An RNA of 177 nucleotides, treated with 2A3 and DMS and read out base by base. High 2A3 reactivity points to a flexible backbone, as in loops and unpaired stretches. The 2A3 profile rests on 3,320 reads. In probing experiments dimethyl sulfate is read out at A N1 and C N3, which are open when not base-paired. DMS adducts were read by reverse transcription with MarathonRT.

RNA sequence: GGGAACGACUCGAGUAGAGUCGAAAACAGAACGGGUGGUAUAGGAGCCGGCCGGACCCGGGCUGCCUCGCUGGCUUCAUCGUCGGGCUCCGACAAGGAAGACAAUGGAAAGCCCACAUCCUGAGAAUAGUUAGGUAUCAUUCGUGAUACCUAACUAAAAAGAAACAACAACAACAAC
Reactivity to 2A3 in 0.01 (KOAc 150mM, MgCl2 10mM, bicine 150mM(pH8.5), 24C), signal-to-noise 3, nucleotides 027 to 126: c020a000g080a110a010c020g020g040g120u040g020g030u130a110u090a260g150g040a040g050c040c010g060g020c020c030g060g020a080c000c020c030g000g020g010c000u020g010c010c010u030c030g060c070u020g000g000c000u020u020c040a060u070c030g050u010c000g000g040g130c080u040c080c000g010a040c020a010a030g090g000a000a050g010a030c010a030a020u060g010g020a230a100a020g020c020c030c010a030c020a040u040c000c010u110g050a090g080a140a100
Reactivity to DMS in 0.01 (KOAc 150mM, MgCl2 10mM, bicine 150mM(pH8.5), 24C), signal-to-noise 5, nucleotides 027 to 126: c070a070g010a080a100c080g000g000g010u000g010g000u000a070u010a120g000g000a140g010c040c030g020g010c010c030g020g010a110c030c050c070g010g010g020c020u000g000c290c030u020c120g020c100u000g010g000c010u000u000c020a050u000c110g010u000c010g000g010g030c110u010c020c010g010a050c080a060a080g010g010a050a080g000a040c040a040a060u000g010g010a060a160a070g010c020c000c020a120c120a080u010c020c020u000g000a160g000a090a160